[RMDB]
RNA sequence: GGGAACGACUCGAGUAGAGUCGAAAAGGGGUCUACGCCGAGGAGAGGUUCGCUUGGAUUUAUGUGGCUGAAGCCUCCACGGCCACAUUGUCAGCGAGACUCUCCGUUUGACGCGUAGACGGAGGCACCCAAAGCAACAGAGUUCGCUCUGUUGCAACAUGUGGUUUAGGUUCGCCUAAACCACAUGAAAAGAAACAACAACAACAAC
Reactivity to 2A3 in 0.01 (KOAc 150mM, MgCl2 10mM, bicine 150mM(pH8.5), 24C), signal-to-noise 4, nucleotides 027 to 156: g060g020g030g010u000c000u000a010c000g000c010c000g040a020g000g000a000g010a020g010g060u050u020c010g030c050u150u250g230g030a150u100u200u140a020u100g000u000g000g020c010u010g020a070a010g010c010c010u000c000c010a010c020g010g000c010c000a000c010a010u040u090g210u260c180a010g010c010g010a010g010a010c000u010c000u000c000c000g000u010u020u020g010a010c000g000c000g000u000a000g000a000c000g000g000a000g000g000c010a020c000c000c000a050a080a020g010c000a000a000c000a000g010a000g020u090u130c240g110c110u000c010u010g000u000u000g010c000a000a010
Reactivity to DMS in 0.01 (KOAc 150mM, MgCl2 10mM, bicine 150mM(pH8.5), 24C), signal-to-noise 1, nucleotides 027 to 156: g000g000g010g010u000c010u000a030c010g010c000c000g040a060g020g020a030g000a040g000g010u000u000c000g000c000u010u010g040g000a130u000u010u000a020u030g000u000g000g020c000u000g000a010a110g030c030c000u000c000c060a300c020g010g050c000c000a010c010a010u000u000g020u010c080a100g020c020g030a090g000a010c020u000c020u000c000c000g000u010u010u010g010a080c250g000c020g020u000a010g010a000c000g000g000a010g170g030c000a120c000c000c020a100a130a240g010c000a010a010c000a050g020a020g070u000u000c300g000c000u010c010u000g020u000u000g010c000a040a040
Structure probing data (2A3 and DMS) for a 207-nucleotide construct. For 2A3 the reverse transcriptase was SuperScript II with manganese. The 2A3 profile rests on 4,092 reads. It was measured as part of the RMDB library RNAMAK. For DMS, 2,499 sequencing reads were counted.